[RMDB]
RNA sequence: GGGAACGACUCGAGUAGAGUCGAAAAACGGGUUGGCUCAUCCUGAGAUCGGGGAGCCUCGACGAUCUCUUUGAUCUCCUGAAGGAGGAAGGAGCUCUCGAGCGCUCUCCCGCCCCUCGGAUGGGCCUGGGAGUGUACUUCGGUACACUCAAAAGAAACAACAACAACAAC
Reactivity to DMS in 0.01 (KOAc 150mM, MgCl2 10mM, bicine 150mM(pH8.5), 24C), signal-to-noise 9, nucleotides 027 to 129: a050c130g000g020g010u060u040g010g030c000u030c000a000u010c000c020u070g030a050g020a130u090c020g010g020g000g000a000g000c010c000u000c000g010a020c170g020a000u030c000u000c000u000u010u040g050a150u040c000u010c000c000u070g040a200a170g010g010a000g000g000a050a010g000g000a010g010c080u000c020u000c020g010a000g000c210g000c010u010c030u060c010c000c000g010c080c130c080c020u030c040g020g000a040u040g020g030g020c000c000u000g010g010
Reactivity to 2A3 in 0.01 (KOAc 150mM, MgCl2 10mM, bicine 150mM(pH8.5), 24C), signal-to-noise 9, nucleotides 027 to 129: a010c100g030g040g050u130u100g020g000c000u000c000a010u010c010c070u180g000a010g000a030u060c010g000g000g000g000a000g000c030c000u000c000g000a030c130g010a010u010c000u000c000u020u030u060g240a260u060c000u040c000c010u260g160a300a140g020g000a000g000g010a010a010g010g000a000g000c010u000c000u000c000g000a010g000c160g000c020u000c090u120c000c000c010g000c000c020c000c000u000c000g000g000a000u000g000g000g000c000c000u000g000g020